[RMDB]
RNA sequence: GGGAACGACUCGAGUAGAGUCGAAAAAGGUUCGCUGUGGUGCAACUCUUAUUAGUAACUAAUCCAAAGCAAGUAUAGGAGAACAGGUUUUUAACUAUUUUUAGGCAGAUAAAAAAUAGUAAUUGACAAAAUCGAUUGUCGUUCGCGACAAUCGAAAGUGUCAUACACUGUUCGCAGUGUAUGACACAAAAGAAACAACAACAACAAC
Reactivity to 2A3 in 0.01 (KOAc 150mM, MgCl2 10mM, bicine 150mM(pH8.5), 24C), signal-to-noise 1, nucleotides 027 to 156: a010g030g000u010u000c000g000c020u000g020u020g020g030u050g000c010a020a040c010u000c030u150u080a120u060u100a130g030u040a080a050c040u020a120a030u070c060c060a080a010a050g000c000a050a040g020u060a040u080a130g030g050a030g000a030a030c000a110g020g020u010u000u000u000u120a040a000c000u000a010u000u040u000u000u000a040g000g050c020a020g060a100u170a070a050a000a000a000a000u010a020g020u030a050a180u070u080g040a040c040a040a130a030a090u020c000g010a000u000u000g000u000c010g000u000u060c150g010c000g130a000c000a000a000u000c010g000a000a000a000

The record gives the reactivity of an RNA of 207 nucleotides to 2A3. The RNA was probed in 150 mM KOAc, 10 mM MgCl2 and 150 mM bicine (pH 8.5) at 24 C. Reactivities are given for positions 27 through 156.